RNA sequence: GGGAACGACUCGAGUAGAGUCGAAAAGGCGGCCUGCGCGAUCACCCGCGCCGCUUGUGUCCCAGCCAGUCCCGCGAGUGGAGGCACGGCAGGAAGGUGGUAGAGGGUAAACCGGUAGUGGUGUGUCAUUCAACCUGUCGUUCGCGACAGGUUGAAUAAAAGAAACAACAACAACAAC
Reactivity to DMS in 0.01 (KOAc 150mM, MgCl2 10mM, bicine 150mM(pH8.5), 24C), signal-to-noise 2, nucleotides 027 to 126: g000g030c010g000g010c080c100u000g020c040g040c040g000a060u010c060a060c040c070c020g010c040g030c010c020g020c000u010u020g010u000g020u000c010c000c000a210g010c030c050a110g020u000c040c010c030g010c120g020a050g030u010g020g020a110g000g010c050a060c080g000g050c040a080g000g000a090a090g010g010u000g000g010u000a060g000a090g000g010g030u000a030a110a090c040c030g010g020u010a070g020u010g020g010u000g020u010g010u010c090